The data come from the RNA Mapping Database (RMDB), library OK3TST. Chemical mapping of a 207-nucleotide RNA with 2A3 and DMS. The DMS profile rests on 6,074 reads. Reactivities are rounded to 0.1 and cut off at 0 and 3. For 2A3, 2,182 sequencing reads were counted.
RNA sequence: GGGAACGACUCGAGUAGAGUCGAAAAUUUAGGCCAAUAUCCUUGAUGAACAUCCAUGUAAAAAUUCUCAAUAAAAUACUGGCAAACCAAAUCCCACAGCACAUCAAAAAGCUUAUCCACCGUGAUCAAGUUGGCUUCAUCCCUGGGAUGCAAGGUAAAAUACUACUAAUUUCGAUUAGUAGUAUUUAAAAGAAACAACAACAACAAC
Reactivity to 2A3 in 0.01 (KOAc 150mM, MgCl2 10mM, bicine 150mM(pH8.5), 24C), signal-to-noise 2, nucleotides 027 to 156: u080u060u060a080g020g000c020c010a030a030u040a040u100c030c000u010u020g020a030u070g030a090a030c030a070u000c060c050a060u160g060u180a050a100a040a080a150u160u050c040u020c070a060a070u180a250a100a020a020u070a070c050u060g030g020c020a070a000a090c010c020a100a100a040u030c020c020c010a020c020a010g080c020a020c010a080u140c050a030a090a050a050a010g020c010u020u050a010u010c010c020a070c070c090g080u100g060a010u030c040a050a030g030u040u020g050g000c000u090u060c030a040u030c020c010c040u020g060g000g000a010u030g000c020a030a000g020g010u080a090
Reactivity to DMS in 0.01 (KOAc 150mM, MgCl2 10mM, bicine 150mM(pH8.5), 24C), signal-to-noise 3, nucleotides 027 to 156: u000u010u010a120g020g040c030c020a040a070u010a070u000c020c090u000u000g010a070u010g020a070a060c050a150u010c090c080a140u000g030u010a020a090a090a140a120u000u010c020u000c020a050a070u000a070a090a060a040u000a040c040u010g020g050c050a090a080a180c050c040a040a100a130u000c000c020c020a070c080a100g030c040a070c050a100u000c070a060a040a110a050a040g020c050u010u000a040u000c020c010a090c070c040g010u000g000a030u000c050a040a090g010u000u000g010g020c060u000u000c050a100u000c040c010c020u010g030g010g030a080u000g020c040a040a030g010g010u000a030